RNA sequence: GGGAACGACUCGAGUAGAGUCGAAAAUCAAACGAUUUCGAUCGUUUGAAACGGACCACUCCUGGGGGAGUUAAGGCCAUACGGACAGCCGGGUCCACUGCCAGUCAUUCGGUUUCGACCGAAUGAACAUAGGUCUUCUGUUCGCAGAAGACCUAUGAAAAGAAACAACAACAACAAC
Reactivity to 2A3 in 0.01 (KOAc 150mM, MgCl2 10mM, bicine 150mM(pH8.5), 24C), signal-to-noise 4, nucleotides 027 to 126: u020c000a010a010a000c000g010a010u040u050u190c240g100a020u000c000g010u000u000u000g010a020a000a000c050g010g000a000c010c000a010c010u020c010c020u190g260g000g150g000g020a010g000u030u170a170a080g000g000c010c010a040u060a050c050g010g010a000c010a010g000c000c000g020g010g000u000c000c000a010c010u040g000c010c000a010g070u020c000a000u000u010c000g000g040u020u050u120c210g080a020c000c000g000a000a010u010g000a010a000
Reactivity to DMS in 0.01 (KOAc 150mM, MgCl2 10mM, bicine 150mM(pH8.5), 24C), signal-to-noise 5, nucleotides 027 to 126: u010c000a010a010a010c000g010a010u000u000u010c180g010a030u000c000g010u000u000u000g000a000a100a140c190g000g000a010c000c010a070c050u000c000c010u010g020g010g010g010g010a070g000u000u010a070a050g000g020c010c020a100u000a070c150g000g000a020c020a200g000c000c000g000g010g010u000c000c010a100c140u020g000c010c010a090g010u000c000a010u000u000c000g000g000u000u000u020c220g010a020c000c000g010a010a000u000g000a020a100
Chemical mapping of a 177-nucleotide RNA with 2A3 and DMS. Conditions: 150 mM KOAc, 10 mM MgCl2 and 150 mM bicine (pH 8.5), 24 C. The data come from the RNA Mapping Database (RMDB), library M2PK50. The DMS profile rests on 8,323 reads. 2A3 adducts were read by reverse transcription with SuperScript II with manganese.